[RMDB]
RNA sequence: GGGAACGACUCGAGUAGAGUCGAAAAUUUGAGACAGAGUCUCACUCUGUUGCUCAGGCUGGAAUGCAGUGGCGCAAUCUCAGCUCACUGCAACCUCCACCUCCUGGGUUCAAGUGAUUCUCCUACCUACGCGUCCAUUAUUCGUAAUGGACGCGUAAAAAGAAACAACAACAACAAC
Reactivity to DMS in 0.01 (KOAc 150mM, MgCl2 10mM, bicine 150mM(pH8.5), 24C), signal-to-noise 2, nucleotides 027 to 126: u010u030u050g000a230g010a070c120a100g010a000g040u000c100u050c190a030c040u000c050u000g000u000u020g000c000u000c000a060g030g000c300u020g010g010a010a070u000g000c020a000g010u030g000g000c220g060c080a200a080u120c210u000c200a130g000c020u010c000a000c040u000g000c000a000a000c160c020u000c000c000a000c160c160u070c050c000u000g000g000g000u000u040c020a000a000g030u000g000a010u020u090c000u010c000c100u000a030c050c020
Reactivity to 2A3 in 0.01 (KOAc 150mM, MgCl2 10mM, bicine 150mM(pH8.5), 24C), signal-to-noise 4, nucleotides 027 to 126: u110u040u120g110a070g020a020c060a030g010a010g010u030c000u060c070a020c000u200c090u030g140u190u140g010c010u020c000a020g000g000c040u000g030g010a040a020u030g000c000a000g000u000g030g040c190g020c150a160a160u090c070u080c230a070g000c010u010c010a000c000u000g010c000a000a010c010c030u020c010c000a020c000c040u080c000c000u010g050g000g000u030u040c040a020a020g000u000g000a030u030u000c020u020c000c000u060a080c020c000